RNA sequence: GGGAACGACUCGAGUAGAGUCGAAAAACUGCCAUACGUGGCAGACACACGCCUUACCAGGACUAAACAGCGUGUCUAAAAAACAGUCCUUCAUACCUGAUCUGGAGGGUAGAUCAGGAAUACUAAAAAAAUCGGGUGAAGUUCGCUUCACCCGAAACUUUAUAUGGGAGUUCGCUCCCAUAUAAAGAAAAGAAACAACAACAACAAC
Reactivity to DMS in 0.01 (KOAc 150mM, MgCl2 10mM, bicine 150mM(pH8.5), 24C), signal-to-noise 1, nucleotides 027 to 156: a120c000u010g000c000c000a120u000a100c130g040u000g030g030c000a030g040a190c270a050c040a030c000g010c000c000u010u000a020c080c030a020g000g000a030c010u000a120a060a120c040a060g010c010g020u020g030u010c110u000a000a020a010a070a020a010c060a040g000u000c010c000u000u000c020a130u000a140c000c000u010g010a010u000c010u000g040g020a040g000g040g010u010a020g000a000u000c010a040g000g000a000a040u010a130c120u040a010a010a020a050a080a220a220u000c030g040g000g000u000g020a050a030g010u000u000c300g020c000u000u000c000a020c000c000c020g000a000a000a010
Reactivity to 2A3 in 0.01 (KOAc 150mM, MgCl2 10mM, bicine 150mM(pH8.5), 24C), signal-to-noise 4, nucleotides 027 to 156: a000c010u010g000c000c000a030u040a070c160g080u020g000g000c010a000g050a010c000a000c000a000c000g010c000c000u030u060a020c030c050a010g020g000a010c010u050a150a050a020c010a010g000c000g000u000g010u020c100u040a010a020a020a010a000a000c030a000g000u000c030c010u020u070c050a070u040a130c000c000u010g000a010u000c000u030g090g030a080g060g070g030u060a010g000a000u010c030a010g020g030a000a020u100a050c040u130a040a020a020a030a020a040a190u040c010g020g010g000u000g000a000a000g020u050u110c130g060c070u000u000c000a000c010c000c000g010a000a000a000